[RMDB]
RNA sequence: GGGAACGACUCGAGUAGAGUCGAAAAGAAAGUUUUUAUUAUGGAUAGCGUAAAGACAAUAAUUGGUACGUUGCUUAUAGCUUUAGGAUUACAAUUUUUAGCUUAUCCAAUUAUUAAUCAACGAGUAGAUCCUCUUGUGGUUCGCCACAAGAGGAUCAAAAGAAACAACAACAACAAC
Reactivity to 2A3 in 0.01 (KOAc 150mM, MgCl2 10mM, bicine 150mM(pH8.5), 24C), signal-to-noise 1, nucleotides 027 to 126: g050a000a000a190g000u160u170u240u170u120a080u080u000a050u000g020g000a080u150a180g000c020g080u060a000a000a110g110a000c070a010a000u050a000a000u010u020g090g000u200a000c020g050u040u180g020c000u010u300a110u000a130g000c000u020u020u090a110g150g000a080u000u060a230c130a040a170u070u040u050u050u210a010g000c080u010u040a000u150c000c000a000a000u000u100a050u000u070a000a000u100c000a000a160c000g000a000g170u150a000